Description: An RNA of 177 nucleotides, treated with DMS and 2A3 and read out base by base. The 2A3 profile rests on 15,564 reads. The RNA was probed in 150 mM KOAc, 10 mM MgCl2 and 150 mM bicine (pH 8.5) at 24 C.

RNA sequence: GGGAACGACUCGAGUAGAGUCGAAAAUAAAAUCGUAGGGCGAGACGAUCGACGUUAAUCGCUCAAACUACUCGAGACCAAAGGAAUACGCUUCGGUAACUCGCUCUAAUCCCGAGCGAUAAAUGAAGGAUACAAUAAUGUUCGCAUUAUUGUAUCCAAAAGAAACAACAACAACAAC
Reactivity to DMS in 0.01 (KOAc 150mM, MgCl2 10mM, bicine 150mM(pH8.5), 24C), signal-to-noise 5, nucleotides 027 to 126: u010a090a050a100a120u010c030g020u000a110g010g000g000c030g020a030g000a040c020g010a110u000c090g000a070c060g030u000u010a090a070u010c070g020c070u010c100a070a070a150c030u010a010c040u000c010g000a010g020a150c060c040a060a090a100g000g010a140a060u010a090c070g000c030u000u000c100g010g000u010a110a090c120u000c010g010c000u000c010u000a090a180u000c090c010c020g010a040g020c010g000a080u010a060a070a090u010g010a100a090
Reactivity to 2A3 in 0.01 (KOAc 150mM, MgCl2 10mM, bicine 150mM(pH8.5), 24C), signal-to-noise 8, nucleotides 027 to 126: u060a000a050a000a030u030c010g000u020a050g000g000g000c010g000a010g010a020c030g030a060u110c060g090a110c030g030u040u080a100a070u110c050g020c040u030c060a020a050a010c000u020a000c000u010c020g010a020g030a070c020c020a070a050a040g160g050a170a080u120a150c050g010c050u050u060c020g020g010u020a040a030c010u000c010g000c000u000c010u020a020a040u030c010c010c000g000a000g000c010g040a040u110a050a150a040u150g090a110a040